[RMDB]
RNA sequence: GGGAACGACUCGAGUAGAGUCGAAAAAGGACAGCCGUUGCCCUAGUGGUUUCGGACACACCGCCAACGCUCAGUGCGGUGCUACCGACCCGAGGUCAAGUCCCGGGGGAGGAGAAGAGAGGCUUCCCGUCACACUCAACUUCGGUUGAGUGUGACGAAAAGAAACAACAACAACAAC
Reactivity to DMS in 0.01 (KOAc 150mM, MgCl2 10mM, bicine 150mM(pH8.5), 24C), signal-to-noise 2, nucleotides 027 to 126: a020g060g000a050c020a070g010c000c040g070u000u020g020c020c000c000u000a210g020u050g040g000u010u030u060c000g000g000a160c300a120c020a050c000c000g020c000c030a110a120c110g000c280u010c150a040g000u020g040c000g010g010u050g000c240u020a190c040c000g000a020c160c020c010g010a100g000g000u000c080a010a240g040u010c060c050c010g010g000g040g000g010a080g020g020a060g000a120a120g000a150g000a050g000g000c040u000u000c000c000
Reactivity to 2A3 in 0.01 (KOAc 150mM, MgCl2 10mM, bicine 150mM(pH8.5), 24C), signal-to-noise 3, nucleotides 027 to 126: a000g030g030a030c050a020g030c050c010g150u110u120g020c010c000c000u020a050g010u200g160g050u090u070u070c020g010g110a140c030a000c000a000c070c000g030c010c000a130a060c100g070c110u230c180a020g030u070g120c030g000g000u010g030c020u080a040c030c000g020a010c010c010c010g020a070g020g000u060c040a070a000g000u050c000c010c010g050g000g000g000g020a030g020g020a130g010a170a010g090a020g000a010g040g010c000u020u000c000c000
About this RNA:
This 177-nucleotide RNA was probed chemically with DMS and 2A3. The reactions ran in a buffer of 150 mM KOAc, 10 mM MgCl2 and 150 mM bicine (pH 8.5), at 24 C. As a SHAPE reagent, 2A3 marks flexible, mostly unpaired nucleotides at the ribose 2'-OH. Reactivities are given for positions 27 through 126.